[RMDB]
RNA sequence: GGGAACGACUCGAGUAGAGUCGAAAACGAUUAAUACAGCACUCUUUUAGAAAUAUAGAGUCAAAAUAUACAAUGGAUUAUUGUAUCAGUUUAAUGGUAGAUGUGGAUUUCCUUGUAAUCGAUGAUUUAGGAGCUGAAAGUGGUUCGAUGAAUCGAAACUUCUUUUCCAUUUCGAUGGAAAAGAAGUAAAAGAAACAACAACAACAAC
Reactivity to 2A3 in 0.01 (KOAc 150mM, MgCl2 10mM, bicine 150mM(pH8.5), 24C), signal-to-noise 2, nucleotides 027 to 156: c000g060a010u120u180a060a100u190a080c050a030g020c040a030c000u080c010u080u160u080u170a090g080a070a130a020u190a130u060a030g000a010g010u000c010a020a120a020a060u160a010u000a030c000a010a040u010g140g020a080u130u090a000u090u290g020u020a030u030c040a040g090u010u090u170a130a070u070g020g020u040a030g010a060u010g030u060g070g010a030u030u060u110c010c000u020u090g060u100a100a060u090c050g020a030u040g000a000u020u020u090a100g030g010a020g010c010u040g080a180a020a010g120u120g070g000u010u040c030g050a050u080g050a050a060u030c020g010a120a000
Reactivity to DMS in 0.01 (KOAc 150mM, MgCl2 10mM, bicine 150mM(pH8.5), 24C), signal-to-noise 2, nucleotides 027 to 156: c090g010a160u000u000a060a130u010a080c090a190g040c020a040c010u000c000u020u000u000u000a120g030a160a120a150u000a050u000a050g000a100g040u020c000a080a070a090a100u020a090u010a030c030a030a040u000g010g000a120u000u000a120u010u000g020u000a020u000c040a080g000u000u010u020a030a050u000g010g020u010a060g000a060u000g000u010g000g000a190u000u000u000c000c010u000u000g020u000a100a080u000c050g000a120u000g000a140u010u000u000a080g040g020a160g010c060u000g020a090a090a110g020u000g020g000u000u000c010g010a110u010g000a050a160u000c020g030a210a070
About this RNA: Structure probing data (2A3 and DMS) for a 207-nucleotide construct. It was measured as part of the RMDB library OK3TST. For DMS the reverse transcriptase was MarathonRT. The reactions ran in a buffer of 150 mM KOAc, 10 mM MgCl2 and 150 mM bicine (pH 8.5), at 24 C.